[RMDB]
RNA sequence: GGGAACGACUCGAGUAGAGUCGAAAAGGGGUCUCGACAUGAAUCUUGAGGAGCAACAGCUAUACUGAAGCCUCCACGGUAUAGACAUGCUCCAAGAUGAGGAUUCAACAGCGAGACGGAGGCACCCAAAACCGUCUUUGGUUCGCCAAAGACGGAACCUCUUCAGUUGCUUCGGCAACUGAAGAGGAAAAGAAACAACAACAACAAC
Reactivity to 2A3 in 0.01 (KOAc 150mM, MgCl2 10mM, bicine 150mM(pH8.5), 24C), signal-to-noise 1, nucleotides 027 to 156: g010g020g040g010u000c010u000c020g070a090c040a200u070g010a000a020u000c050u140u230g060a140g020g020a010g000c030a000a110c080a150g050c010u000a000u000a000c010u030g090a210a040g000c020c000u000c000c010a010c000g000g000u000a000u020a000g080a000c060a200u120g000c030u020c000c010a000a000g000a110u300g120a050g080g030a010u000u020c010a020a070c010a090g100c010g020a020g000a010c000g010g000a020g020g050c010a040c000c020c000a040a050a030a050c000c020g020u000c010u050u100u000g060g010u010u100c240g040c060c000a020a000a000g000a020c280g010g000a010a020
Description
Chemical mapping of a 207-nucleotide RNA with 2A3. 2A3 is a SHAPE reagent: it acylates the 2'-hydroxyl of flexible nucleotides of all four kinds. For 2A3, 722 sequencing reads were counted. The reactions ran in a buffer of 150 mM KOAc, 10 mM MgCl2 and 150 mM bicine (pH 8.5), at 24 C.